The record gives the reactivity of an RNA of 207 nucleotides to 2A3. It was measured as part of the RMDB library OK3TST.
RNA sequence: GGGAACGACUCGAGUAGAGUCGAAAAGUCGGAUGGGAAAGCAUGCCUCCGUAUUGCCAUCCGAAACGUACGGCAAGGUGCCAGAUGCCUCAUGACCAUCAGCGCUGUCACUGGCCACAGACGUAUCUGGACAGACGCAACAGUGCCCAUCCGAAACCUGAGAACUACCUUUCGAGGUAGUUCUCAGAAAAGAAACAACAACAACAAC
Reactivity to 2A3 in 0.01 (KOAc 150mM, MgCl2 10mM, bicine 150mM(pH8.5), 24C), signal-to-noise 2, nucleotides 027 to 156: g090u000c020g000g000a000u010g020g020g020a000a070a080g160c010a040u060g040c000c000u040c030c030g000u030a050u030u260g060c050c010a150u170c120c090g050a090a030a010c020g000u000a000c020g000g050c060a100a060g070g050u070g110c000c020a000g000a010u000g040c000c000u110c050a060u070g010a050c030c000a070u200c030a030g060c060g040c120u070g080u110c060a040c070u040g020g020c020c010a000c040a040g020a020c010g020u040a040u010c000u010g020g010a030c010a060g090a090c070g020c030a010a030c000a070g060u020g100c000c000c000a020u000c000c010g020a090a050a010c000
2A3 adducts were read by reverse transcription with SuperScript II with manganese. Reactivities are given for positions 27 through 156.